This 207-nucleotide RNA was probed chemically with 2A3 and DMS. The 2A3 profile rests on 4,298 reads. The reactions ran in a buffer of 150 mM KOAc, 10 mM MgCl2 and 150 mM bicine (pH 8.5), at 24 C. For DMS, 6,279 sequencing reads were counted.

RNA sequence: GGGAACGACUCGAGUAGAGUCGAAAAUCACGGUGAAAGCACAAAAAUCAGAGGCCAGGAAAUUGGCAGCUACGUAUUUUAAAUAGGAUUUCGGUAAUCUUUGGCUGGUCUUUCCUAACAAUGUUGAAGUUGAUAUUUUGUAACUUAACAUUGGUUCCCUACCACUAAUAUUCGUAUUAGUGGUAGGAAAAGAAACAACAACAACAAC
Reactivity to 2A3 in 0.01 (KOAc 150mM, MgCl2 10mM, bicine 150mM(pH8.5), 24C), signal-to-noise 6, nucleotides 027 to 156: u060c010a010c040g050g020u080g040a150a050a050g050c040a020c030a080a110a040a010a020u090c050a070g050a060g120g000c020c020a050g040g130a070a100a120u140u070g020g020c010a010g030c010u060a020c040g070u070a100u020u140u040u140a080a140a090u120a060g040g000a020u040u050u060c040g010g010u040a070a090u010c010u040u050u070g060g000c020u020g020g010u000c010u000u020u000c010c010u020a060a010c000a000a010u030g010u040u110g140a040a020g010u040u040g080a110u070a300u200u210u200u250g070u040a010a000c000u000u010a010a000c000a010u000u010g040g010u050u140c010
Reactivity to DMS in 0.01 (KOAc 150mM, MgCl2 10mM, bicine 150mM(pH8.5), 24C), signal-to-noise 2, nucleotides 027 to 156: u000c020a040c070g040g020u000g000a090a070a110g030c010a170c040a050a060a060a100a120u000c090a140g010a150g010g020c000c010a060g010g010a050a070a130u010u000g020g020c050a080g010c030u010a030c060g010u000a040u000u000u000u010a020a090a100u010a060g000g010a090u010u000u000c040g020g030u000a030a040u000c020u000u000u000g010g010c060u000g020g000u000c040u010u000u000c010c010u000a100a050c000a010a010u000g000u000u000g030a010a060g030u000u000g010a120u000a190u000u000u000u000g010u000a010a010c000u000u000a020a010c000a030u000u000g020g000u000u000c030
Reactivities are given for positions 27 through 156.